Structure probing data (DMS and 2A3) for a 177-nucleotide construct. Values cover nucleotides 27 to 126. Conditions: 150 mM KOAc, 10 mM MgCl2 and 150 mM bicine (pH 8.5), 24 C. For DMS the reverse transcriptase was MarathonRT. It was measured as part of the RMDB library OK1LIB.

RNA sequence: GGGAACGACUCGAGUAGAGUCGAAAAGCUCUAGGAGACUAGAGCGAUACGUUAGAGAGCUCGUGGCAUGACUAACGGAUAGCCAGGUGCGAGGUUGCCAGAGGACAUAGCUAUAGCUAUGUCCAAAGAGCUAUCAUACGUUCGCGUAUGAUAGCUCAAAAGAAACAACAACAACAAC
Reactivity to DMS in 0.01 (KOAc 150mM, MgCl2 10mM, bicine 150mM(pH8.5), 24C), signal-to-noise 2, nucleotides 027 to 126: g000c000u000c000u010a000g000g000a300g000a180c000u000a000g000a000g000c000g010a060u030a040c030g000u010u010a050g000a240g000a100g000c020u000c160g010u040g000g000c010a040u040g040a270c080u000a030a000c100g010g000a130u020a040g010c030c000a110g000g000u000g000c030g000a070g000g000u000u000g000c010c030a090g010a280g000g000a000c000a000u000a040g010c000u040a170u030a060g000c000u010a000u000g000u010c000c000a000a020a060
Reactivity to 2A3 in 0.01 (KOAc 150mM, MgCl2 10mM, bicine 150mM(pH8.5), 24C), signal-to-noise 1, nucleotides 027 to 126: g000c000u000c000u000a010g000g030a140g010a060c000u020a000g010a000g000c000g000a000u020a040c010g010u040u040a000g020a010g000a040g240c000u020c060g020u020g040g010c020a010u070g060a050c060u030a010a010c010g050g000a100u020a010g070c020c020a020g000g000u090g000c080g110a060g000g000u170u060g040c000c000a050g000a020g030g010a000c000a000u000a000g000c010u060a020u070a300g010c000u000a000u040g000u050c000c000a030a000a000